[RMDB]
RNA sequence: GGGAACGACUCGAGUAGAGUCGAAAAGAUAUGGAACCAAUCCCACCUCGACGAAGAAUUUCGGAAACGAAAUUCAGAGAGGUGUGAGAUUCCCUUCCUAAGUCAAACGUCUCCUUCGGGAGACGAAGACCUUCUGUACGUUCGCGUACAGAAGGUCAAAAGAAACAACAACAACAAC
Reactivity to DMS in 0.01 (KOAc 150mM, MgCl2 10mM, bicine 150mM(pH8.5), 24C), signal-to-noise 1, nucleotides 027 to 126: g000a070u000a140u010g000g000a020a040c140c080a150a110u000c060c030c020a040c000c010u000c000g040a120c290g000a080a110g000a040a000u000u000u020c010g010g000a030a060a100c000g000a000a010a010u000u010c010a020g000a110g000a010g020g000u000g010u000g010a080g000a070u000u000c040c010c070u010u000c000c000u010a030a080g010u010c030a050a020a170c040g020u010c000u000c000c000u000u010c130g010g000g010a010g010a000c000g000a030a100
Reactivity to 2A3 in 0.01 (KOAc 150mM, MgCl2 10mM, bicine 150mM(pH8.5), 24C), signal-to-noise 1, nucleotides 027 to 126: g020a030u160a040u300g000g000a000a030c140c070a080a080u030c040c010c020a000c020c000u050c020g300a300c020g040a130a100g000a020a000u000u000u010c000g030g030a060a000a040c000g040a000a000a010u000u010c010a010g000a000g000a000g000g010u010g010u020g000a220g010a050u030u030c040c000c000u020u040c010c000u030a100a060g130u100c170a280a000a160c040g010u010c010u040c020c000u040u140c300g180g020g010a000g010a000c020g010a000a000

The record gives the reactivity of an RNA of 177 nucleotides to DMS and 2A3. The reactions ran in a buffer of 150 mM KOAc, 10 mM MgCl2 and 150 mM bicine (pH 8.5), at 24 C. For DMS, 906 sequencing reads were counted. Reactivities are rounded to 0.1 and cut off at 0 and 3. For 2A3 the reverse transcriptase was SuperScript II with manganese.